[RMDB]
RNA sequence: GGGAACGACUCGAGUAGAGUCGAAAAAGCCGGAGUACGCUCCUGCAUGGGUAGACGAAUUGACCCCAACUGAAGUUCAAUUCUAACGUUAAAAGGAGUUUUAUAUGACUGGACGUACGCGUCCAGAUGACGAUUUCAUUCUUCGGAAUGAAAUCAAGUGACUUAUUGUGUUCGCACAAUAAGUCACAAAAGAAACAACAACAACAAC
Reactivity to 2A3 in 0.01 (KOAc 150mM, MgCl2 10mM, bicine 150mM(pH8.5), 24C), signal-to-noise 1, nucleotides 027 to 156: a000g000c020c010g000g000a030g000u110a100c180g000c080u000c000c000u000g000c000a060u060g000g030g000u160a200g050a210c070g000a000a000u000u000g000a000c030c000c030c000a020a100c110u190g070a030a020g020u110u000c000a000a000u000u000c000u130a090a040c080g070u100u090a000a060a020a070g180g030a080g040u000u030u150u080a040u040a050u250g130a020c000u000g000g000a010c020g030u050a040c230g020c000g070u000c000c020a000g010a000u020g040a010c170g000a000u000u020u000c000a000u000u000c000u010u010c070g040g000a000a010u000g000a000a000a000u000c000a010a010
An RNA of 207 nucleotides, treated with 2A3 and read out base by base. The 2A3 profile rests on 688 reads. The RNA was probed in 150 mM KOAc, 10 mM MgCl2 and 150 mM bicine (pH 8.5) at 24 C. Source: RMDB library M2RFPK, as collected in RNAgym. 2A3 adducts were read by reverse transcription with SuperScript II with manganese.